[RMDB]
Structure probing data (DMS and 2A3) for a 177-nucleotide construct.
In probing experiments dimethyl sulfate is read out at A N1 and C N3, which are open when not base-paired.
It was measured as part of the RMDB libraries RFM100 and RFMREP.
RNA sequence: GGGAACGACUCGAGUAGAGUCGAAAAGCAGCUAUUCAUUUAAAGAGUGCGUAACAGCUCACUAGUCGAGCGAUCGAGCGUGGAUAAUAAUCGGGCAUAAGCAUAGUACCGAAGAUAUGGAAUUGAAGAUUAUAUCUCCGUUCGCGGAGAUAUAAUCAAAAGAAACAACAACAACAAC
Reactivity to DMS in 0.01 (KOAc 150mM, MgCl2 10mM, bicine 150mM(pH8.5), 24C), signal-to-noise 6, nucleotides 027 to 126: g020c090a090g010c040u010a010u020u000c050a060u030u010u030a080a090a120g010a060g020u010g010c060g010u010a090a080c140a140g000c030u000c010a100c100u000a060g010u020c070g010a040g010c120g020a080u020c060g010a150g020c060g010u010g020g000a060u010a040a050u000a090a110u010c040g000g000g000c030a060u010a070a080g010c130a060u010a070g000u010a080c020c030g010a050a060g000a070u030a060u030g000g010a060a160u030u000g000a070a060
Reactivity to 2A3 in 0.01 (KOAc 150mM, MgCl2 10mM, bicine 150mM(pH8.5), 24C), signal-to-noise 6, nucleotides 027 to 126: g000c000a010g010c010u040a080u120u070c080a110u060u110u240a130a160a040g070a030g040u050g000c000g000u010a130a060c020a090g020c000u000c000a070c040u090a050g100u090c070g030a010g000c020g020a100u050c050g010a030g010c040g010u050g050g030a030u030a150a030u060a030a030u110c040g040g010g000c030a040u070a160a040g010c020a050u060a090g030u040a160c030c010g020a030a000g050a030u140a080u110g070g060a080a090u090u080g040a110a030